Chemical mapping of a 207-nucleotide RNA with 2A3 and DMS.
Reactivities are given for positions 27 through 156.
High DMS reactivity at an A or C suggests that its Watson-Crick edge is free.

RNA sequence: GGGAACGACUCGAGUAGAGUCGAAAAUGGCCCCAUGAGGGUGCGGGGACGAAGCUGGAUAUAGCCAUUGUCGGGCCAAGCAAGAUGCAAUCUGGUUCCACAUUCCUGAUCCACAAACGUGUAUAAGCUAGCAGGAUCUUGAGCGCGCACUGCGAUGCGUAAUGCCUGUAUUCGUACAGGCAUUACGAAAAGAAACAACAACAACAAC
Reactivity to 2A3 in 0.01 (KOAc 150mM, MgCl2 10mM, bicine 150mM(pH8.5), 24C), signal-to-noise 4, nucleotides 027 to 156: u060g060g000c020c000c010c020a140u150g010a100g010g060g000u050g020c040g000g020g010g000a010c040g070a060a010g050c040u030g020g020a040u050a030u090a160g000c040c050a070u050u090g020u030c020g020g020g000c030c000a040a020g000c010a040a090g040a110u150g040c020a020a040u060c070u050g010g010u070u050c020c010a040c010a050u010u040c000c020u050g020a060u050c030c000a020c030a070a170a050c100g020u030g010u070a100u050a170a070g050c070u050a010g040c030a030g000g020a030u010c000u020u080g060a040g020c040g000c010g000c050a010c050u080g000c060g050a040u080g010
Reactivity to DMS in 0.01 (KOAc 150mM, MgCl2 10mM, bicine 150mM(pH8.5), 24C), signal-to-noise 2, nucleotides 027 to 156: u000g020g010c000c020c010c060a170u020g030a160g000g000g080u000g020c060g010g000g010g010a100c110g000a060a090g010c000u000g030g010a080u000a110u000a150g030c020c050a090u000u000g020u000c010g030g000g030c010c050a030a120g020c090a050a090g020a150u010g010c030a100a100u000c040u000g010g000u000u000c070c070a080c040a100u010u000c030c030u010g000a090u000c010c020a070c060a030a090a080c050g010u000g030u000a110u010a040a110g020c040u010a120g030c040a150g010g010a020u000c050u030u010g000a050g020c000g000c050g040c090a090c050u010g010c020g010a170u020g010
For DMS, 4,224 sequencing reads were counted. The 2A3 profile rests on 3,069 reads. For 2A3 the reverse transcriptase was SuperScript II with manganese. The reactions ran in a buffer of 150 mM KOAc, 10 mM MgCl2 and 150 mM bicine (pH 8.5), at 24 C.